[RMDB]
RNA sequence: GGGAACGACUCGAGUAGAGUCGAAAAGGCGGCAGUCCUCAGUGCUCUUACUCUUUCCUAUAAAGAGGAGACUGCUGGACUCGCCGCCCAAGCCCGAGCAUGGGCCCCAGUUCCGAACGAAGAGACCACGCGCCAGACUUCGGUCUGGCGAAAAGAAACAACAACAACAAC
Reactivity to 2A3 in 0.01 (KOAc 150mM, MgCl2 10mM, bicine 150mM(pH8.5), 24C), signal-to-noise 4, nucleotides 027 to 129: g000g000c000g000g020c010a000g020u000c020c010u010c010a010g010u170g270c010u030c010u050u230a230c000u000c000u030u050u090c070c060u110a100u240a290a050a000g020a000g000g000a000g000a000c000u000g080c050u020g010g000a000c000u010c070g030c000c000g000c000c000c010a000a000g000c010c000c000g010a070g000c070a130u170g000g000g000c000c000c000c000a000g010u160u010c000c010g030a020a010c010g010a090a010g020a020g010a040c010c000a120c070g040
Reactivity to DMS in 0.01 (KOAc 150mM, MgCl2 10mM, bicine 150mM(pH8.5), 24C), signal-to-noise 2, nucleotides 027 to 129: g060g000c020g010g030c030a070g050u020c000c040u010c060a010g020u060g000c030u010c020u000u000a220c020u020c030u000u010u080c180c240u100a160u090a110a030a010g040a080g000g030a010g000a010c010u000g020c160u010g010g000a000c010u000c160g070c020c000g060c000c000c030a000a000g030c090c010c000g020a090g000c160a080u000g010g000g000c060c040c000c030a050g000u010u060c020c050g010a160a040c050g010a090a110g030a030g000a130c090c040a070c000g030